[RMDB]
RNA sequence: GGGAACGACUCGAGUAGAGUCGAAAAGUCGAAGUAGAGGGAGACCACAGGGAUCCGCUCCCUCCGGAUGUACUCCCAUAUGUCGAGCUCGGUGCACUCGAGGAUGGGGUGGAUCCGCACGUGGGUAAUUUACCCUCCGUUUCGACGGAGGGUAAAUAAAAGAAACAACAACAACAAC
Reactivity to 2A3 in 0.01 (KOAc 150mM, MgCl2 10mM, bicine 150mM(pH8.5), 24C), signal-to-noise 2, nucleotides 027 to 126: g040u020c000g030a040a030g030u070a050g020a050g040g010g000a070g010a050c020c010a010c020a060g100g020g000a000u020c000c000g020c040u000c000c000c000u000c010c010g000g000a020u090g060u250a110c080u020c000c020c020a050u150a070u190g070u000c040g030a000g010c070u090c150g110g130u120g040c040a000c060u010c020g010a030g020g000a010u040g010g010g030g000u000g000g010a020u020c020c010g030c010a060c010g000u010g000g010g020u060a020
Reactivity to DMS in 0.01 (KOAc 150mM, MgCl2 10mM, bicine 150mM(pH8.5), 24C), signal-to-noise 3, nucleotides 027 to 126: g010u000c030g010a010a070g000u000a040g000a070g000g000g010a130g010a110c020c010a020c040a160g000g010g010a010u000c010c010g030c020u000c000c010c030u000c010c000g030g010a040u020g010u000a140c140u000c010c000c020a210u010a100u010g020u000c020g000a030g030c110u010c060g010g000u000g000c130a140c040u000c000g010a050g010g020a000u000g010g000g000g010u000g000g000a010u000c000c000g020c120a070c180g000u000g000g000g010u010a030